[RMDB]
RNA sequence: GGGAACGACUCGAGUAGAGUCGAAAAUGACAGAUUUGUGAUAGUCGGUAAGAUACAUGACAGCUGCGCAGCAUCACUUCACGCGCUGUCAUCGGAUGUCUAGAACAUUCCUUCUAAGAAUAGCCACCCAGCUAAAACAGUUCGCUGUUUUAGCUGGAAAAGAAACAACAACAACAAC
Reactivity to DMS in 0.01 (KOAc 150mM, MgCl2 10mM, bicine 150mM(pH8.5), 24C), signal-to-noise 3, nucleotides 027 to 126: u030g020a050c120a040g020a060u000u040u030g010u020g000a070u010a050g030u010c040g030g000u010a100a060g010a080u000a100c140a020u010g010a010c000a010g010c010u060g020c010g000c130a140g000c200a140u000c230a070c130u020u000c090a230c050g000c030g000c030u000g010u030c000a000u000c120g030g000a090u000g000u000c000u010a030g010a100a080c080a080u010u010c000c010u010u000c050u000a060a080g000a080a110u020a090g000c000c080a130c180
Reactivity to 2A3 in 0.01 (KOAc 150mM, MgCl2 10mM, bicine 150mM(pH8.5), 24C), signal-to-noise 4, nucleotides 027 to 126: u140g030a010c040a050g130a070u050u100u140g070u040g030a070u040a080g040u020c030g000g040u100a060a030g010a070u100a040c080a040u020g000a000c000a000g000c030u240g000c020g000c050a120g040c040a080u120c060a030c000u200u110c100a040c060g000c000g000c020u000g010u000c000a010u010c000g050g010a050u050g020u000c030u040a030g060a030a010c010a040u020u060c020c010u020u070c020u070a080a170g060a080a080u070a030g060c000c000a020c020
Chemical mapping of a 177-nucleotide RNA with DMS and 2A3. For DMS, 4,024 sequencing reads were counted. Reactivities are rounded to 0.1 and cut off at 0 and 3. For DMS the reverse transcriptase was MarathonRT. For 2A3 the reverse transcriptase was SuperScript II with manganese. The data come from the RNA Mapping Database (RMDB), library OK1LIB.